[RMDB]
About this RNA
An RNA of 177 nucleotides, treated with 2A3 and DMS and read out base by base. Values cover nucleotides 27 to 126. Conditions: 150 mM KOAc, 10 mM MgCl2 and 150 mM bicine (pH 8.5), 24 C.
RNA sequence: GGGAACGACUCGAGUAGAGUCGAAAAAGCGAUUAACGAGUCGCUCCAUCCACCGAUGGAUAAUCGGGUACGCGAGGCUUGUCAGUACAUCAGCGAUCACCUGGCAGACAGCAAUUUUGAUAUCGCCCGAUAAUGCACGUUUCGACGUGCAUUAUCGAAAAGAAACAACAACAACAAC
Reactivity to 2A3 in 0.01 (KOAc 150mM, MgCl2 10mM, bicine 150mM(pH8.5), 24C), signal-to-noise 4, nucleotides 027 to 126: a000g140c020g000a030u070u070a060a060c030g020a020g010u010c000g020c010u030c000c000a070u060c010c010a080c030c010g000a010u030g040g050a070u140a160a020u060c010g020g000g050u050a060c100g020c050g080a040g080g000c060u080u080g040u080c010a010g010u090a060c010a080u080c040a040g040c020g050a020u040c010a020c030c000u030g040g000c020a030g030a080c020a020g070c020a100a140u100u120u130u140g080a050u040a020u130c030g000c000c000
Reactivity to DMS in 0.01 (KOAc 150mM, MgCl2 10mM, bicine 150mM(pH8.5), 24C), signal-to-noise 4, nucleotides 027 to 126: a110g010c030g010a040u010u010a230a120c050g000a050g020u000c000g010c040u000c000c010a110u000c040c090a160c050c020g000a020u000g000g010a100u020a100a060u000c000g000g000g010u000a100c150g010c080g010a070g010g010c060u010u010g010u000c030a060g030u020a090c120a080u000c070a120g000c080g000a040u010c070a130c190c030u000g000g030c080a010g000a020c090a070g010c130a080a090u000u000u000u000g010a080u010a060u010c070g020c040c110